Annotation
Source: RMDB library M2PK90, as collected in RNAgym. This 177-nucleotide RNA was probed chemically with DMS and 2A3. The RNA was probed in 150 mM KOAc, 10 mM MgCl2 and 150 mM bicine (pH 8.5) at 24 C.
RNA sequence: GGGAACGACUCGAGUAGAGUCGAAAAUAAAAUCGUAGGGCGAGACGAUCGACGUAAAUCGCUCAAACUACUCGAGACCAAAGGAAUACGCUUCGCUAACUCGCUCUAAUCCCGAGCGAUAAAUGAACAAGUUAGUACAGUUCGCUGUACUAACUUGAAAAGAAACAACAACAACAAC
Reactivity to DMS in 0.01 (KOAc 150mM, MgCl2 10mM, bicine 150mM(pH8.5), 24C), signal-to-noise 4, nucleotides 027 to 126: u030a040a100a080a120u000c030g020u010a130g010g020g000c040g010a040g000a050c030g020a110u000c090g010a090c060g010u010a050a080a080u000c030g000c030u010c020a090a120a150c040u000a010c010u000c030g000a010g000a160c030c090a080a070a080g000g000a090a060u000a060c100g000c080u010u000c030g000c090u000a100a110c120u000c010g030c020u000c000u000a070a130u000c050c040c030g000a040g020c050g000a040u020a050a030a100u010g010a070a130
Reactivity to 2A3 in 0.01 (KOAc 150mM, MgCl2 10mM, bicine 150mM(pH8.5), 24C), signal-to-noise 5, nucleotides 027 to 126: u070a000a060a010a050u030c020g020u020a090g010g010g000c010g000a020g040a080c020g030a080u150c110g130a130c030g050u070a040a090a080u030c020g010c010u010c040a040a050a020c010u030a000c000u010c020g030a030g040a070c070c000a100a060a030g080g030a090a050u080a090c050g010c080u030u030c020g000c070u060a080a060c020u000c010g000c000u000c020u040a030a050u030c010c000c020g000a010g000c010g020a040u110a060a100a080u080g010a050a040